[RMDB]
This 177-nucleotide RNA was probed chemically with 2A3 and DMS. The DMS profile rests on 3,773 reads. The 2A3 profile rests on 2,012 reads. The reactions ran in a buffer of 150 mM KOAc, 10 mM MgCl2 and 150 mM bicine (pH 8.5), at 24 C. In probing experiments dimethyl sulfate is read out at A N1 and C N3, which are open when not base-paired.
RNA sequence: GGGAACGACUCGAGUAGAGUCGAAAAAGUUUAAAUUUUUCCGAGGAAUAGAGAAGUGGGAUGAACAAUUCAGGAAUUACAAGUGAGCCAAUUUCCCAUCUCAAUCAUGCAGAGACGCUGCUCAGCCUCAGCAUACUAACUUCGGUUAGUAUGCUGAAAAAGAAACAACAACAACAAC
Reactivity to 2A3 in 0.01 (KOAc 150mM, MgCl2 10mM, bicine 150mM(pH8.5), 24C), signal-to-noise 4, nucleotides 027 to 126: a000g070u120u140u240a060a090a190u060u050u010u010u010c000c010g040a050g000g100a090a130u120a120g050a000g070a220a060g100u100g020g030g000a040u030g050a100a050c040a100a060u100u070c030a070g090g000a050a080u170u040a090c060a110a120g060u020g100a030g080c050c060a030a040u030u050u000c000c000c000a030u060c030u020c010a050a080u110c070a040u160g070c030a010g000a010g010a100c010g040c140u040g000c000u000c010a010g040c000c030
Reactivity to DMS in 0.01 (KOAc 150mM, MgCl2 10mM, bicine 150mM(pH8.5), 24C), signal-to-noise 3, nucleotides 027 to 126: a100g030u020u010u020a040a060a100u000u000u000u000u000c010c060g000a070g020g000a070a060u000a060g000a030g000a070a080g000u010g050g000g020a030u000g000a080a080c110a100a090u000u010c060a090g000g000a080a070u040u020a080c150a100a110g010u030g000a040g010c020c070a040a070u000u010u010c010c000c000a050u020c030u010c040a020a020u040c100a050u010g020c100a050g000a090g000a050c120g010c060u010g000c030u020c060a100g010c120c060